[RMDB]
Structure probing data (2A3) for a 207-nucleotide construct. Source: RMDB library OK3TST, as collected in RNAgym. For 2A3, 813 sequencing reads were counted. For 2A3 the reverse transcriptase was SuperScript II with manganese.
RNA sequence: GGGAACGACUCGAGUAGAGUCGAAAACGCCGGCGCCUUGGUACUCGCGCGCCGCCUGCGGGUAGUGCUCCGCCAUGUAGGGCGCCAGCUCGGCCUCGAUUACGUCAGCAAUAAACUCUUCGACGGCGCCACGGUCGCCGCCGUCGACGCCGACGGCCAUUGUCUAUUGCUUCGGCAAUAGACAAUGAAAAGAAACAACAACAACAAC
Reactivity to 2A3 in 0.01 (KOAc 150mM, MgCl2 10mM, bicine 150mM(pH8.5), 24C), signal-to-noise 2, nucleotides 027 to 156: c020g020c000c130g030g000c000g000c020c040u060u080g020g040u070a010c030u050c040g000c010g020c040g020c010c020g000c010c010u060g000c120g030g010g000u040a080g010u060g110c030u050c090c050g000c040c040a090u170g100u200a090g000g000g000c000g000c000c000a010g000c060u090c060g060g020c000c010u030c070g090a100u060u270a080c050g020u060c010a010g010c030a050a050u090a300a210a130c060u070c030u060u060c050g020a020c040g020g000c020g060c050c040a110c060g070g070u120c050g010c070c050g000c000c010g020u000c010g000a000c030g030c050c050g030a040c000g040g000c010